The data come from the RNA Mapping Database (RMDB), library M2RFPK. Chemical mapping of a 207-nucleotide RNA with 2A3 and DMS. For 2A3, 4,401 sequencing reads were counted. For 2A3 the reverse transcriptase was SuperScript II with manganese. For DMS, 5,074 sequencing reads were counted.

[RMDB]
RNA sequence: GGGAACGACUCGAGUAGAGUCGAAAAGGCGUAGCCGACAACAUGCCCAGGUAGCCCAGACCUUCAAGGCUACGGUGCGUUGCGACGCACGGUCUGAUUCUUCACAACGACGUUCACCGCGUCUUAUACAACCGGCAAAGAUUCGUCUUUGCCGGAACAAGAAAGUCAUGUUCGCAUGACUUUCUUGAAAAGAAACAACAACAACAAC
Reactivity to 2A3 in 0.01 (KOAc 150mM, MgCl2 10mM, bicine 150mM(pH8.5), 24C), signal-to-noise 5, nucleotides 027 to 156: g040g000c130g090u110a030g000c030c010g050a030c040a110a040c010a060u230g010c010c010c020a030g040g010u010a020g000c010c050c090a010g010a010c000c010u020u020c020a000a000g000g000c000u010a000c010g000g000u000g000c000g000u010u060g070c130g130a010c000g000c010a000c000g000g000u000c000u010g050a070u130u070c080u150u170c090a070c070a200a090c090g020a010c010g070u180u270c060a050c100c040g010c000g020u010c010u020u050a130u030a030c050a090a080c000c000g000g010c000a000a000a000g010a010u060u120c200g030u000c110u000u000u000g000c000c000g010g000a000a000
Reactivity to DMS in 0.01 (KOAc 150mM, MgCl2 10mM, bicine 150mM(pH8.5), 24C), signal-to-noise 3, nucleotides 027 to 156: g040g020c000g020u000a120g010c020c000g030a250c050a080a050c020a050u000g020c010c000c040a110g080g020u000a000g030c030c000c150a170g000a120c060c030u010u000c070a090a230g020g000c000u000a030c020g020g050u000g020c050g030u010u000g040c130g020a190c010g010c020a020c060g000g010u010c010u020g010a190u000u000c050u000u000c080a110c100a090a090c060g020a030c000g010u000u010c100a120c060c050g010c040g000u000c020u000u000a080u000a050c040a090a210c000c000g010g000c000a000a020a020g000a080u000u010c300g010u000c000u000u000u010g010c000c000g000g010a000a020

For DMS the reverse transcriptase was MarathonRT.